Chemical mapping of a 207-nucleotide RNA with 2A3. For 2A3, 443 sequencing reads were counted. Values cover nucleotides 27 to 156. The reactions ran in a buffer of 150 mM KOAc, 10 mM MgCl2 and 150 mM bicine (pH 8.5), at 24 C.

[RMDB]
RNA sequence: GGGAACGACUCGAGUAGAGUCGAAAAUUCUUCCAAAGUACAGCAACCUAACCUGUUCAUCAAUUGCAAUAGAGGACUCAGAGGUUAUUGCACAAAACCUAGCUAUGUUACAAGACAAUUCUAUUCUGUUUCCUGGAACAAAAGCCUAUGAGGAAGAUCACAGGGUAAGCUUCGGCUUACCCUGUGAAAAAGAAACAACAACAACAAC
Reactivity to 2A3 in 0.01 (KOAc 150mM, MgCl2 10mM, bicine 150mM(pH8.5), 24C), signal-to-noise 1, nucleotides 027 to 156: u020u000c000u040u060c020c010a000a120a030g110u100a050c010a070g060c000a080a150c010c000u010a090a000c020c020u090g000u020u060c010a060u040c020a140a200u250u190g010c030a010a040u040a130g060a030g030g030a010c060u070c160a010g000a000g160g000u020u010a040u090u090g000c050a030c020a020a100a040a050c020c060u040a060g000c040u040a060u160g000u060u030a070c050a110a000g020a030c020a060a020u120u050c010u170a180u100u000c000u090g050u000u000u000c050c000u000g020g050a060a050c010a050a110a120a000g000c010c000u110a100u110g020a000g010g020a010a070g000a030
Source: RMDB library OK3TST, as collected in RNAgym.